Structure probing data (2A3) for a 207-nucleotide construct. The reactions ran in a buffer of 150 mM KOAc, 10 mM MgCl2 and 150 mM bicine (pH 8.5), at 24 C. It was measured as part of the RMDB library OK3TST.

RNA sequence: GGGAACGACUCGAGUAGAGUCGAAAAGACGGUCUCUAUGCCAUUGAAUAUAAGCCCGAGUUGUUUGCGCAGUUUGAGCGACGUGGAGAUUACUGGCGUGGUACUCGUGCGGGGAUUGCGAACCGAGCGCAAGACGUGGUCUUCAUACCAGUGGAGCGAUGGAGCACGGUUUCGACCGUGCUCCAUCAAAAGAAACAACAACAACAAC
Reactivity to 2A3 in 0.01 (KOAc 150mM, MgCl2 10mM, bicine 150mM(pH8.5), 24C), signal-to-noise 1, nucleotides 027 to 156: g090a030c070g050g050u040c020u000c030u120a070u120g070c020c010a090u060u150g080a120a020u120a040u080a050a060g040c000c010c010g010a000g010u000u120g000u000u040u110g010c010g000c010a020g000u010u070u160g050a050g000c050g040a100c010g000u080g020g050a040g030a090u040u070a110c010u070g040g200c010g080u050g020g020u000a030c000u000c020g050u010g050c050g060g050g000g010a090u060u150g010c020g030a020a020c010c000g060a070g070c020g000c070a070a020g070a030c010g020u040g040g030u000c000u000u030c080a040u010a200c050c070a050g020u070g020g040a040g040c090